[RMDB]
The data come from the RNA Mapping Database (RMDB), library M2PK90. The record gives the reactivity of an RNA of 177 nucleotides to DMS and 2A3. The reactions ran in a buffer of 150 mM KOAc, 10 mM MgCl2 and 150 mM bicine (pH 8.5), at 24 C. Values cover nucleotides 27 to 126.
RNA sequence: GGGAACGACUCGAGUAGAGUCGAAAAUUAAAGGAGGAGGAGGAGUGUGUGUCUUCCCAGCUGCUGAGUAGAACCUCCGCACACACGCGAAAGCUACGAGCAGCAGCAGUGCGGAAAGGGUGAAAAACAUGCUGCAUAUGUUCGCAUAUGCAGCAUGAAAAGAAACAACAACAACAAC
Reactivity to DMS in 0.01 (KOAc 150mM, MgCl2 10mM, bicine 150mM(pH8.5), 24C), signal-to-noise 4, nucleotides 027 to 126: u000u000a100a100a130g010g000a050g010g000a090g010g010a110g020g000a090g000u010g020u000g000u000g010u000c110u000u000c010c000c020a170g010c000u000g010c020u010g000a110g050u000a050g010a100a080c030c030u000c090c000g010c030a070c120a090c190a100c160g000c040g010a050a180a070g000c010u000a020c080g010a110g030c060a030g000c110a090g010c020a090g020u000g000c060g000g000a020a040a080g010g000g020u010g010a030a070a090a080a130
Reactivity to 2A3 in 0.01 (KOAc 150mM, MgCl2 10mM, bicine 150mM(pH8.5), 24C), signal-to-noise 2, nucleotides 027 to 126: u070u010a090a010a000g050g030a020g000g010a020g000g040a010g030g000a110g030u070g010u050g000u000g020u080c050u020u000c000c000c000a000g010c010u040g020c000u000g020a020g050u060a020g080a040a020c010c000u030c020c000g000c010a040c000a010c020a020c080g020c050g010a100a030a000g020c000u030a010c110g120a100g120c040a000g010c000a000g000c020a030g030u050g050c010g000g060a100a090a050g100g010g010u100g080a080a040a000a000a010